[RMDB]
RNA sequence: GGGAACGACUCGAGUAGAGUCGAAAACAACUGUUAUCUUGCCACUGCAUUGUUAACACUCCAACAAAUAGAGCUGAAGUUUAAUCCACCUGCUCUACAAAGGGCUGGUGAAGCUGCUAACUUUUGUAUACACGCGUGUUCGCACGCGUGAAAAGAAACAACAACAACAAC
Reactivity to DMS in 0.01 (KOAc 150mM, MgCl2 10mM, bicine 150mM(pH8.5), 24C), signal-to-noise 2, nucleotides 027 to 129: c070a020a080c260u010g010u000u050a080u080c110u000u100g010c110c140a170c160u060g080c010a020u000u000g010u010u010a030a160c040a130c070u030c020c050a110a030c160a060a090a090u110a050g040a020g050c050u000g000a130a040g000u070u060u060a170a090u040c140c030a000c000c010u040g000c040u000c000u010a060c300a000a000a000g000g000g000c030u050g040g040u060g010a010a060g030c020u000g000c060u060a080a020c070u010u010u010u000g000u050a100u020a110
Reactivity to 2A3 in 0.01 (KOAc 150mM, MgCl2 10mM, bicine 150mM(pH8.5), 24C), signal-to-noise 4, nucleotides 027 to 129: c020a020a020c030u060g010u050u040a110u050c020u010u080g010c020c050a080c070u100g000c010a030u010u090g020u040u040a010a010c030a000c060u020c030c030a030a050c030a020a110a030u100a000g030a000g060c000u080g050a120a030g040u060u070u210a040a020u040c000c000a000c020c010u050g010c010u000c000u060a090c020a030a240a020g030g000g000c020u010g000g000u010g000a030a020g010c050u030g000c020u050a010a120c010u010u000u010u050g070u030a060u030a070